[RMDB]
RNA sequence: GGGAACGACUCGAGUAGAGUCGAAAAUGGCGUGCUAGGGGUUUUACACUUGAUGGAUUGGUAUCCACUUUCAUUACUGAUCUGCACGCUGAAGAUGGGGAGUGGAUAUCCCCCAAUUUAUUAAGUGCAAUUAUAUAGACUUCGGUCUAUAUAAUUGAAAAGAAACAACAACAACAAC
Reactivity to DMS in 0.01 (KOAc 150mM, MgCl2 10mM, bicine 150mM(pH8.5), 24C), signal-to-noise 6, nucleotides 027 to 126: u030g010g010c000g020u000g000c010u030a110g000g010g010g010u010u010u010u000a000c000a000c000u000u000g000a000u000g000g000a000u000u000g000g000u000a000u000c000c000a000c000u000u000u000c020a100u020u030a120c110u030g020a090u020c090u010g010c010a020c010g010c010u000g000a080a080g010a080u030g010g000g010g010a010g010u000g010g000a030u000a050u020c040c100c070c020c030a000a000u000u000u000a000u000u000a000a000g010u000g000
Reactivity to 2A3 in 0.01 (KOAc 150mM, MgCl2 10mM, bicine 150mM(pH8.5), 24C), signal-to-noise 5, nucleotides 027 to 126: u110g010g000c000g000u010g010c040u070a080g000g010g020g040u010u010u020u030a010c010a000c000u000u010g000a000u010g000g000a000u000u000g000g000u010a000u010c000c000a000c000u020u030u010c020a060u010u170a110c030u040g030a020u010c010u030g000c000a000c010g000c000u000g030a030a000g080a030u120g010g010g000g010a000g000u000g000g000a010u000a060u050c020c000c000c000c000a010a000u010u020u020a010u000u010a010a000g000u000g010
Chemical mapping of a 177-nucleotide RNA with DMS and 2A3. Values cover nucleotides 27 to 126. Source: RMDB library OK1LIB, as collected in RNAgym. For DMS, 23,013 sequencing reads were counted. For 2A3 the reverse transcriptase was SuperScript II with manganese.